[RMDB]
RNA sequence: GGGAACGACUCGAGUAGAGUCGAAAAACGCGGUAUACGUACCGCGACUGAGGAGCAGGGCUUAGCUGCUUGUGAGCAGGGUCCACACCAAGUCGUGUUCACAGUGGCUAAGUUCCGCCCCCCAGAAGUACGGGCCAUGUUUCGACAUGGCCCGUACAAAAGAAACAACAACAACAAC
Reactivity to 2A3 in 0.01 (KOAc 150mM, MgCl2 10mM, bicine 150mM(pH8.5), 24C), signal-to-noise 2, nucleotides 027 to 126: a000c060g030c000g000g000u030a030u040a090c240g060u010a010c000c000g000c000g030a030c030u000g010a060g010g000a020g040c060a180g050g000g000c020u010u000a000g010c000u010g010c000u160u230g000u000g010a000g000c040a040g020g170g060u240c100c120a200c040a060c150c040a030a060g080u040c170g100u000g000u000u000c000a010c000a010g010u020g000g000c000u020a000a000g000u040u010c000c000g000c000c000c010c000c000c000a000g040a100a000